[RMDB]
RNA sequence: GGGAACGACUCGAGUAGAGUCGAAAAGAGUGUUAUGGAGGAAACGGUAGCCAGCCUUAAAAAAAAUCAGGCUUGGUGUAAUCCCAGCACUUUGGGAGGCUAAGGCAGGAGGAUUGCUUGAGUCCAGUGAUUCCUACAUGUUCGCAUGUAGGAAUCAAAAAGAAACAACAACAACAAC
Reactivity to DMS in 0.01 (KOAc 150mM, MgCl2 10mM, bicine 150mM(pH8.5), 24C), signal-to-noise 2, nucleotides 027 to 126: g000a050g030u000g020u000u010a070u000g020g000a070g010g000a070a080a110c130g010g010u010a170g030c000c010a040g020c010c020u010u010a000a030a020a070a070a080a110a190u000c130a020g020g010c030u010u000g040g010u010g000u000a100a120u000c020c000c030a090g020c080a050c110u000u000u000g030g000g000a070g040g010c060u000a020a060g000g000c030a040g000g040a110g010g010a090u010u000g000c030u000u000g000a080g020u000c010c060a100g010